Structure probing data (2A3 and DMS) for a 177-nucleotide construct.
[RMDB]
RNA sequence: GGGAACGACUCGAGUAGAGUCGAAAAAGCCGUCGUACGCGACGGCAACGGAUAGCCCCGUGUUGUUGUCUGACCCCCGACCCCGACGGCAAUGCGGGGCAAUCCCACAGUCCAUACGUGGACUGAAAAUUAAGCGGUGGUUCGCCACCGCUUAAUUAAAAGAAACAACAACAACAAC
Reactivity to 2A3 in 0.01 (KOAc 150mM, MgCl2 10mM, bicine 150mM(pH8.5), 24C), signal-to-noise 2, nucleotides 027 to 126: a000g010c010c000g020u000c000g050u080a020c260g030c010g120a010c000g000g000c000a000a050c010g060g000a090u010a080g010c030c000c000c000g000u010g000u000u000g010u000u000g010u000c130u150g240a210c000c010c020c000c010g040a120c020c050c050c020g000a020c010g000g020c000a000a010u000g000c000g020g000g020g020c000a000a000u000c000c000c000a030c000a000g000u000c010c000a000u000a080c250g130u060g000g000a000c020u000g000a060a100
Reactivity to DMS in 0.01 (KOAc 150mM, MgCl2 10mM, bicine 150mM(pH8.5), 24C), signal-to-noise 1, nucleotides 027 to 126: a150g010c000c010g040u000c010g050u030a050c280g010c000g000a050c010g000g000c010a010a000c130g000g020a150u000a150g050c000c000c000c000g000u000g020u000u000g030u000u050g010u000c000u030g010a190c070c010c010c000c010g000a230c030c020c080c060g060a010c000g000g000c000a000a000u000g030c000g050g000g010g000c000a000a000u000c000c000c160a300c000a030g000u000c000c000a060u070a190c060g030u000g030g000a000c000u000g000a020a150
The data come from the RNA Mapping Database (RMDB), library RFM100. The DMS profile rests on 1,523 reads. Values cover nucleotides 27 to 126.